This 177-nucleotide RNA was probed chemically with DMS and 2A3.
Source: RMDB library OK2TST, as collected in RNAgym.
For 2A3, 26,189 sequencing reads were counted.
RNA sequence: GGGAACGACUCGAGUAGAGUCGAAAAGAGGUCUACAUUCGCCAACCGCGUACCCUGAUUUAUGCGCAAAAACUACUUUAUGAUAGUCGUACCCACGUCAUGGAUAUCGACGACGUAGCAGGUACGCUCUUACCCUGUAAUUCGUUACAGGGUAAGAAAAAGAAACAACAACAACAAC
Reactivity to DMS in 0.01 (KOAc 150mM, MgCl2 10mM, bicine 150mM(pH8.5), 24C), signal-to-noise 9, nucleotides 027 to 126: g010a110g010g010u000c040u000a090c100a130u000u010c050g010c030c050a100a100c090c070g020c040g010u000a050c060c020c050u000g010a100u010u000u010a070u020g010c070g030c140a050a040a050a080a080c060u000a030c040u000u000u000a060u020g010a170u000a050g010u000c010g010u000a040c010c010c010a100c100g010u000c070a140u000g010g010a130u010a090u020c080g000a080c060g000a060c040g010u000a050g040c080a060g010g000u000a020c030g010c060
Reactivity to 2A3 in 0.01 (KOAc 150mM, MgCl2 10mM, bicine 150mM(pH8.5), 24C), signal-to-noise 9, nucleotides 027 to 126: g090a020g020g030u030c040u100a090c040a130u050u110c040g010c020c020a060a060c050c030g000c010g010u040a060c010c020c040u020g070a090u040u140u140a100u150g040c070g010c040a030a030a060a100a050c050u120a030c020u110u130u110a150u240g120a120u090a070g030u050c000g000u010a030c000c020c000a010c010g040u020c010a100u150g130g090a130u160a100u300c090g080a060c040g010a000c010g030u010a030g020c050a010g000g030u020a000c010g000c000